Overview: An RNA of 177 nucleotides, treated with DMS and 2A3 and read out base by base. The DMS profile rests on 1,195 reads. The RNA was probed in 150 mM KOAc, 10 mM MgCl2 and 150 mM bicine (pH 8.5) at 24 C. Values cover nucleotides 27 to 126. It was measured as part of the RMDB library OK2TRN.
[RMDB]
RNA sequence: GGGAACGACUCGAGUAGAGUCGAAAAUCGCUCACCCACCGGCAUGGCGUUGGCAGACGUCCGUGGCAUGGCAAACAGUACUGUGCGCCGUUUCUGCUUCACGUGGAACAAUUAUUCAGAACUAGAGAUUAGUAGAUGCGUUCGCGCAUCUACUAAUAAAAGAAACAACAACAACAAC
Reactivity to DMS in 0.01 (KOAc 150mM, MgCl2 10mM, bicine 150mM(pH8.5), 24C), signal-to-noise 2, nucleotides 027 to 126: u000c070g030c030u000c060a190c090c010c020a080c100c040g020g030c050a050u000g000g000c060g030u000u000g020g000c100a080g010a080c100g000u000c040c090g010u000g000g010c080a050u000g000g000c040a070a170a100c120a130g030u000a090c110u010g020u000g020c200g000c020c020g020u000u000u000c010u000g010c020u010u010c100a040c090g040u000g000g020a050a100c090a050a060u000u010a090u000u010c070a060g000a060a070c110u000a120g000a080g020
Reactivity to 2A3 in 0.01 (KOAc 150mM, MgCl2 10mM, bicine 150mM(pH8.5), 24C), signal-to-noise 1, nucleotides 027 to 126: u020c000g020c040u080c040a080c010c000c000a020c000c020g000g010c090a110u040g010g040c000g040u030u020g060g020c000a040g060a030c000g060u100c000c060g000u090g070g060c070a090u060g040g000c020a060a110a030c020a070g120u150a090c080u070g000u020g000c060g000c040c000g030u000u100u000c020u050g000c040u000u080c060a040c070g060u030g080g010a090a000c060a060a070u130u120a100u190u150c060a090g060a170a040c050u090a100g030a040g000